[RMDB]
RNA sequence: GGGAACGACUCGAGUAGAGUCGAAAACAACUGUUAUCUUGCCACUUCAUUGUUAACACUCCAACAAAUAGAGUUGAAGUUUAAUCCACCUGCUCUACAAAGGGCUGGUGAAGCUGCUAACUUUUGUAUAGCGCCCGCUUCGGCGGGCGCAAAAGAAACAACAACAACAAC
Reactivity to 2A3 in 0.01 (KOAc 150mM, MgCl2 10mM, bicine 150mM(pH8.5), 24C), signal-to-noise 1, nucleotides 027 to 129: c050a000a170c060u060g000u000u000a010u000c050u120u090g020c000c000a050c000u080u000c000a000u000u000g190u070u000a070a070c000a000c000u000c000c000a000a000c000a070a060a180u300a040g300a190g000u000u000g000a000a000g070u080u000u060a300a130u110c000c090a110c020c020u000g000c000u000c000u170a160c170a300a300a060g000g000g000c000u000g000g000u030g000a000a000g000c000u000g000c000u000a060a060c000u000u000u000u000g000u000a000u070a020
Notes
Structure probing data (2A3) for a 170-nucleotide construct. Source: RMDB library 15KLIB, as collected in RNAgym.